[RMDB]
RNA sequence: GGGAACGACUCGAGUAGAGUCGAAAAGAUAUGGACAGAGCGAUAAGUCGCACUCGGAAACGAGUGGCGACUUUUGACGCUCGGGUCCUAAGUCAAAGUAGCUAGUUGCUUCGGCAACUAGCUACAACAAUGAAUAGUUGUUCGCAACUAUUCAUUGAAAAGAAACAACAACAACAAC
Reactivity to DMS in 0.01 (KOAc 150mM, MgCl2 10mM, bicine 150mM(pH8.5), 24C), signal-to-noise 9, nucleotides 027 to 126: g010a040u000a240u010g000g010a010c010a300g000a010g020c000g020a140u010a020a020g020u000c000g020c000a030c000u000c000g010g000a080a070a140c000g010a010g010u000g020g020c000g010a000c000u000u000u000u000g010a190c050g000c000u000c000g000g010g000u000c000c010u000a020a110g010u000c030a090a100a170g010u000a000g010c000u000a000g010u000u000g010c000u000u010c200g020g000c000a000a000c000u000a000g000c000u000a000c000a050a130
Reactivity to 2A3 in 0.01 (KOAc 150mM, MgCl2 10mM, bicine 150mM(pH8.5), 24C), signal-to-noise 4, nucleotides 027 to 126: g000a010u050a020u050g010g000a000c010a010g010a010g000c010g060a100u060a300a020g010u000c010g000c010a000c000u010c000g020g000a050a030a010c010g000a000g020u010g010g000c020g000a000c010u010u000u000u010g010a000c010g000c010u000c010g020g180g000u000c000c000u010a050a000g020u010c040a090a050a180g000u020a000g000c010u010a010g000u000u010g000c020u050u080c300g040g010c010a010a000c000u000a000g000c010u010a000c000a000a000
This 177-nucleotide RNA was probed chemically with DMS and 2A3. As a SHAPE reagent, 2A3 marks flexible, mostly unpaired nucleotides at the ribose 2'-OH. The reactions ran in a buffer of 150 mM KOAc, 10 mM MgCl2 and 150 mM bicine (pH 8.5), at 24 C. Source: RMDB library TTRDEL, as collected in RNAgym. Values cover nucleotides 27 to 126.